Description:
The record gives the reactivity of an RNA of 177 nucleotides to DMS and 2A3. High DMS reactivity at an A or C suggests that its Watson-Crick edge is free. 2A3 is a SHAPE reagent: it acylates the 2'-hydroxyl of flexible nucleotides of all four kinds. Source: RMDB library OK1LIB, as collected in RNAgym. For 2A3, 2,849 sequencing reads were counted.

[RMDB]
RNA sequence: GGGAACGACUCGAGUAGAGUCGAAAAAUGAACUUUGAAGAUUCAACAUACUCUUCACAUCCUCUACAAACUGCGAUGAGGACAUGUGAAAAUUUUCUAAUGGAUGAGAAGUGUGGAGGAAGAGAGUAUAACGAGAGAUGUUCGCAUCUCUCGUUAUAAAAGAAACAACAACAACAAC
Reactivity to DMS in 0.01 (KOAc 150mM, MgCl2 10mM, bicine 150mM(pH8.5), 24C), signal-to-noise 3, nucleotides 027 to 126: a050u040g000a100a060c060u030u010u020g000a130a190g010a120u010u000c030a110a170c180a060u020a020c050u000c010u000u010c070a060c270a110u000c000c020u000c000u000a100c020a050a050a080c110u020g010c120g040a070u040g030a080g020g000a050c070a010u000g000u000g000a020a040a130a080u040u020u000u000c010u000a090a070u020g010g000a030u020g000a080g010a020a030g000u000g020u000g010g000a050g010g010a010a110g000a020g000a020g040u010
Reactivity to 2A3 in 0.01 (KOAc 150mM, MgCl2 10mM, bicine 150mM(pH8.5), 24C), signal-to-noise 5, nucleotides 027 to 126: a000u130g000a060a040c110u080u140u170g090a110a010g050a120u120u100c020a010a060c000a050u110a020c000u000c000u090u060c010a010c000a070u000c010c000u000c000u040a110c010a090a300a210c090u130g040c070g150a150u130g000a060g080g010a010c040a110u110g010u010g030a010a010a030a020u110u140u050u020c060u060a060a080u090g110g040a060u040g040a060g040a130a050g040u000g030u020g020g030a020g030g040a100a010g030a000g000a010g020u030